[RMDB]
RNA sequence: GGGAACGACUCGAGUAGAGUCGAAAAGCUUCCACCCCAGAAUGCACUGACUCGCGGGCUGACUCAGGGCGGGGAAGGUGCGUUGCUGGGUACGGGGGCGCGUAGGGCAGCGCAACAGACAACACGCCGCAAACUGGUCAGUGAUUAUCUCGACCGGGUCAUAUGAUUCUUUCGAGAAUCAUAUGACAAAAGAAACAACAACAACAAC
Reactivity to 2A3 in 0.01 (KOAc 150mM, MgCl2 10mM, bicine 150mM(pH8.5), 24C), signal-to-noise 3, nucleotides 027 to 156: g000c010u040u020c010c000a060c040c000c000c000a000g010a040a030u030g020c010a000c010u080g040a020c000u030c030g020c010g170g220g030c130u100g100a300c040u100c210a110g110g070g040c070g040g000g000g000a090a060g000g000u010g000c010g000u000u060g170c010u000g000g000g000u000a020c050g000g000g000g000g000c040g000c020g010u060a080g000g000g080c020a000g000c000g000c030a040a040c070a090g140a030c020a100a000c030a070c080g000c010c000g100c040a060a080a000c030u040g000g000u000c000a050g020u040g100a210u080u270a100u120c040u050c050g020a020c030c000g000g060